Description:
The record gives the reactivity of an RNA of 177 nucleotides to DMS and 2A3. 2A3 adducts were read by reverse transcription with SuperScript II with manganese. The RNA was probed in 150 mM KOAc, 10 mM MgCl2 and 150 mM bicine (pH 8.5) at 24 C. The 2A3 profile rests on 11,410 reads.

RNA sequence: GGGAACGACUCGAGUAGAGUCGAAAAAAGAUAUGGACGCAGCGGAAUUUGUUCCCUUCGACGAAGAACGCUUUCGGAAACGAAAGCGGGAGUCGAAGGAACAGGAGAUGCUGCGUCCUAAGUCAAACUCUUUAAGUUUGUUCGCAAACUUAAAGAGAAAAGAAACAACAACAACAAC
Reactivity to DMS in 0.01 (KOAc 150mM, MgCl2 10mM, bicine 150mM(pH8.5), 24C), signal-to-noise 5, nucleotides 027 to 126: a100a080g000a060u000a300u000g000g010a000c010g030c000a000g010c010g000g010a300a140u010u010u000g000u000u000c130c040c050u000u010c000g020a010c010g000a120a150g010a110a240c020g010c000u000u000u000c000g000g010a100a090a220c000g000a000a000a010g010c000g000g000g010a050g010u000c000g010a010a000g000g000a010a010c000a010g000g000a060g000a300u020g000c000u000g010c010g000u000c000c000u000a010a040g010u000c030a100a090a190
Reactivity to 2A3 in 0.01 (KOAc 150mM, MgCl2 10mM, bicine 150mM(pH8.5), 24C), signal-to-noise 2, nucleotides 027 to 126: a000a000g090a040u130a060u150g000g010a010c010g010c010a010g000c020g050g060a050a040u040u040u000g010u030u000c120c020c000u000u010c000g000a010c020g100a230a080g030a050a010c000g000c030u020u010u000c000g020g020a080a090a100c010g000a000a000a010g000c020g000g010g000a020g010u010c000g010a000a000g000g000a000a000c000a010g030g020a090g010a010u070g020c000u000g010c000g000u000c000c000u000a000a000g010u000c000a030a000a070